RNA sequence: GGGAACGACUCGAGUAGAGUCGAAAAGAUAUGGAGCGUUACAGCAACAGCACGUCCAUCGGAAACGAUGGCGUGACAUGCUGGGCGCUCCUAAGUCAAAAUCGCAUACAGUUCGCUGUAUGCGAAAGUCUUAAUUUAGGUUCGCCUAAAUUAAGACAAAAGAAACAACAACAACAAC
Reactivity to 2A3 in 0.01 (KOAc 150mM, MgCl2 10mM, bicine 150mM(pH8.5), 24C), signal-to-noise 9, nucleotides 027 to 126: g000a000u020a010u070g000g010a000g000c020g030u070u150a300c180a020g010c100a140a290c120a270g030c000a020c000g140u190c050c000a000u000c000g010g000a020a000a000c000g000a000u000g010g000c000g000u000g000a030c010a040u300g000c000u000g000g010g000c000g000c000u000c000c000u000a000a000g000u000c000a000a020a020a300u040c010g000c000a000u000a000c000a000g040u050u130c260g060c160u000g000u010a000u010g000c000g000a000a000a000
Reactivity to DMS in 0.01 (KOAc 150mM, MgCl2 10mM, bicine 150mM(pH8.5), 24C), signal-to-noise 8, nucleotides 027 to 126: g010a020u000a080u010g000g000a000g010c000g010u000u000a140c010a010g030c010a110a130c280a210g010c000a010c000g000u020c010c000a000u000c000g010g000a030a030a040c010g010a010u000g000g000c000g010u000g010a030c090a080u010g010c000u000g000g000g000c000g010c000u000c000c000u000a000a040g000u000c010a100a090a110a180u000c000g000c000a010u000a010c000a010g010u000u010c270g020c010u000g000u000a000u000g010c000g010a000a020a070